[RMDB]
RNA sequence: GGGAACGACUCGAGUAGAGUCGAAAAUACUUAAGCAGCCGUUUACUUUCUGAGAACGGCAGGCUACAAACUUGAGGCGAACGAAGAAAGAAAUAGGCACGCGGAGGAGUCAUAAAGGUGAAAAGCAACCUAGGUAGCAUUUCGAUGCUACCUAGGUAAAAGAAACAACAACAACAAC
Reactivity to DMS in 0.01 (KOAc 150mM, MgCl2 10mM, bicine 150mM(pH8.5), 24C), signal-to-noise 2, nucleotides 027 to 126: u040a080c060u000u000a090a070g020c070a160g000c040c000g040u000u010u060a050c060u000u020u040c090u060g000a290g000a020a060c010g000g050c000a030g000g050c000u000a090c220a070a130a050c100u000u000g000a010g010g000c010g000a030a140c010g000a200a030g000a030a120a030g050a020a080a100u020a010g020g010c000a020c070g000c080g000g000a050g000g010a100g010u010c040a050u000a000a070a100g000g000u010g000a080a020a040a130g000c120a130
Reactivity to 2A3 in 0.01 (KOAc 150mM, MgCl2 10mM, bicine 150mM(pH8.5), 24C), signal-to-noise 3, nucleotides 027 to 126: u120a000c050u120u140a080a000g040c040a020g010c000c000g060u030u040u060a130c050u070u160u080c090u250g140a090g000a080a000c000g020g000c010a020g040g040c000u030a070c040a050a280a050c050u070u060g040a020g010g060c020g050a060a000c020g020a070a100g070a050a050a040g080a010a160a060u200a120g010g000c000a010c050g020c030g000g020a070g000g030a010g020u030c000a050u050a050a040a020g070g000u060g130a110a040a000a040g090c010a010
This 177-nucleotide RNA was probed chemically with DMS and 2A3. The 2A3 profile rests on 1,469 reads. It was measured as part of the RMDB library OK1LIB. Values are in units of 0.01, from 0 to 300, in steps of 10. The reactions ran in a buffer of 150 mM KOAc, 10 mM MgCl2 and 150 mM bicine (pH 8.5), at 24 C.